[RMDB]
RNA sequence: GGGAACGACUCGAGUAGAGUCGAAAAGUCCUGUGGACGUGGGACGCUGGGCUCCGAGCAUGACCUCUCUCCUCUGUGCACAAGUCUGGUUGCCACCAGGAGUGGAUGGGACCAGGGGACCUCGUGGUCAGCAUACGUGGUUCGCCACGUAUGCUGAAAAAGAAACAACAACAACAAC
Reactivity to DMS in 0.01 (KOAc 150mM, MgCl2 10mM, bicine 150mM(pH8.5), 24C), signal-to-noise 2, nucleotides 027 to 126: g010u000c000c000u000g000u020g000g040a060c050g010u000g000g010g010a170c050g020c060u000g000g020g070c070u000c040c040g000a070g020c090a060u010g000a060c070c040u000c030u010c070u000c010c010u000c090u000g010u000g030c050a050c050a100a110g000u000c050u020g020g010u000u000g020c110c030a050c050c150a030g000g010a070g010u010g000g000a080u000g010g030g000a020c010c000a030g010g000g000g000a140c050c030u000c050g010u000g000g000
Reactivity to 2A3 in 0.01 (KOAc 150mM, MgCl2 10mM, bicine 150mM(pH8.5), 24C), signal-to-noise 2, nucleotides 027 to 126: g040u020c000c000u050g080u150g110g060a030c050g010u040g000g010g000a020c090g050c120u010g010g010g010c050u040c030c050g010a040g030c020a150u170g100a080c000c030u040c000u000c000u000c000c000u000c040u100g080u130g000c000a000c040a100a070g110u040c080u040g110g060u130u110g120c030c010a010c000c020a020g010g030a060g040u110g020g050a140u090g050g000g020a030c000c040a000g050g030g010g000a020c010c020u030c050g030u020g050g020
This 177-nucleotide RNA was probed chemically with DMS and 2A3.
For DMS, 1,918 sequencing reads were counted.
Values cover nucleotides 27 to 126.